Conditions: 150 mM KOAc, 10 mM MgCl2 and 150 mM bicine (pH 8.5), 24 C. Structure probing data (DMS and 2A3) for a 207-nucleotide construct. DMS adducts were read by reverse transcription with MarathonRT. It was measured as part of the RMDB library OK3TST. For DMS, 8,458 sequencing reads were counted. Values cover nucleotides 27 to 156. 2A3 adducts were read by reverse transcription with SuperScript II with manganese.

RNA sequence: GGGAACGACUCGAGUAGAGUCGAAAAAGCUUCAGGAAAGCCUGGGCCUCCCUGUCUCUGGCUAAGCCUGAGACUGCUGCCCAGUUCCUCAUCAGAAUGUCUGAGGGAUGUUAAUUUCCUCCAGGAGUCUUGCCCUAUUGAUUCAGUAGCUGAUUCCCGAUGCAUAUCUAUUCGUAGAUAUGCAUCGAAAAGAAACAACAACAACAAC
Reactivity to DMS in 0.01 (KOAc 150mM, MgCl2 10mM, bicine 150mM(pH8.5), 24C), signal-to-noise 3, nucleotides 027 to 156: a080g020c020u000u000c020a140g020g010a230a100a090g010c100c020u000g010g010g010c020c040u000c020c040c030u000g010u000c010u010c010u010g020g010c020u010a110a150g020c020c000u020g010a030g010a030c010u010g000c040u000g010c010c020c020a130g010u000u000c010c010u010c050a150u010c030a070g000a110a080u010g010u010c050u000g000a080g010g020g010a040u010g010u000u010a080a130u010u000u000c020c010u010c030c030a070g000g000a060g020u000c020u000u000g020c020c000c020u010a100u000u000g010a140u000u000c070a180g030u010a100g020c020u000g010a300u000u000c020c030
Reactivity to 2A3 in 0.01 (KOAc 150mM, MgCl2 10mM, bicine 150mM(pH8.5), 24C), signal-to-noise 8, nucleotides 027 to 156: a000g010c010u090u060c030a020g000g070a110a020a010g020c010c010u010g000g010g000c010c010u050c040c020c010u020g000u000c000u010c020u050g020g000c080u190a160a080g010c010c000u000g000a000g000a000c020u030g020c030u030g000c020c000c000a010g010u030u020c010c000u020c010a140u040c010a030g220a300a140u200g100u120c040u040g010a020g010g000g010a030u050g070u120u150a160a140u080u030u020c000c000u020c040c030a030g020g020a020g040u030c040u070u100g040c010c010c000u090a130u040u170g100a110u110u090c040a020g070u080a020g060c050u040g020a130u040u040c020c010